[RMDB]
RNA sequence: GGGAACGACUCGAGUAGAGUCGAAAAAGCCAAUCCUUCGGGAUUGGCUACAGCAACGAAGCAAAGCAACGAGACAAGACGAGCAAAAGAUCGAGGAUGCUACACACCCCAUCUUCGGAUGGGGUAAUACUUGCUAGUUUUUCGAAACUAGCAAGUAAAAAGAAACAACAACAACAAC
Reactivity to DMS in 0.01 (KOAc 150mM, MgCl2 10mM, bicine 150mM(pH8.5), 24C), signal-to-noise 4, nucleotides 027 to 126: a050g020c020c000a000a000u000c000c010u010u010c180g040g020g010a010u000u000g000g010c000u000a020c050a090g010c070a050a080c080g010a060a050g020c070a080a060a120g010c030a070a050c030g020a100g000a070c050a050a070g000a060c090g000a110g020c070a030a050a060a060g000a060u000c070g020a080g000g000a120u000g020c040u000a070c100a070c170a050c000c000c000c010a010u000c000u000u000c160g040g010a010u000g000g010g000g010u000a000a030
Reactivity to 2A3 in 0.01 (KOAc 150mM, MgCl2 10mM, bicine 150mM(pH8.5), 24C), signal-to-noise 2, nucleotides 027 to 126: a000g000c000c000a000a010u030c000c020u030u070c200g070g000g010a000u020u000g030g000c000u000a000c000a010g030c030a040a050c030g090a090a010g020c030a080a050a060g040c010a050a050c020g040a030g010a070c040a060a070g060a050c040g050a010g050c030a010a060a030a070g050a030u040c010g010a000g070g010a030u060g040c020u120a030c060a000c010a000c060c000c000c010a000u000c000u030u060c120g030g000a000u010g000g000g000g000u000a010a000